An RNA of 177 nucleotides, treated with 2A3 and DMS and read out base by base. For 2A3, 4,087 sequencing reads were counted. The data come from the RNA Mapping Database (RMDB), library OK2TST. 2A3 adducts were read by reverse transcription with SuperScript II with manganese. The RNA was probed in 150 mM KOAc, 10 mM MgCl2 and 150 mM bicine (pH 8.5) at 24 C. DMS adducts were read by reverse transcription with MarathonRT.

RNA sequence: GGGAACGACUCGAGUAGAGUCGAAAAGACGUAUGGUGAAGGUGGUGCCUUCUCCCGGGGUGCUCGCUACGCUCACCUCGCCGCGAUGGGCCUGUACGAUGUGCUUCACGAUGGAGAGGCCGAGACCAUGAUUAUCUCACUUCGGUGAGAUAAUCAUAAAAGAAACAACAACAACAAC
Reactivity to 2A3 in 0.01 (KOAc 150mM, MgCl2 10mM, bicine 150mM(pH8.5), 24C), signal-to-noise 4, nucleotides 027 to 126: g090a010c060g090u120a050u170g070g000u110g060a110a060g070g020u060g040g040u160g050c010c000u110u060c020u020c020c020c000g000g020g000g020u010g000c000u030c050g050c080u080a050c070g020c040u030c020a030c000c010u030c040g040c050c010g060c050g050a100u050g000g010g010c000c070u100g020u040a020c030g040a050u140g050u070g020c010u080u130c060a060c130g120a180u220g020g020a030g000a010g020g000c010c040g030a060g030a020c020c000
Reactivity to DMS in 0.01 (KOAc 150mM, MgCl2 10mM, bicine 150mM(pH8.5), 24C), signal-to-noise 5, nucleotides 027 to 126: g020a080c100g000u010a060u000g010g020u010g010a060a060g010g010u010g000g010u000g030c020c020u000u000c060u010c000c020c080g010g010g010g020u000g010c050u000c050g020c120u000a050c120g020c030u000c010a040c030c020u010c060g010c050c070g010c080g010a080u000g010g010g000c030c090u000g010u000a070c070g010a060u010g010u010g020c030u000u000c040a120c110g010a160u000g010g010a080g000a050g000g010c030c070g000a070g000a080c070c050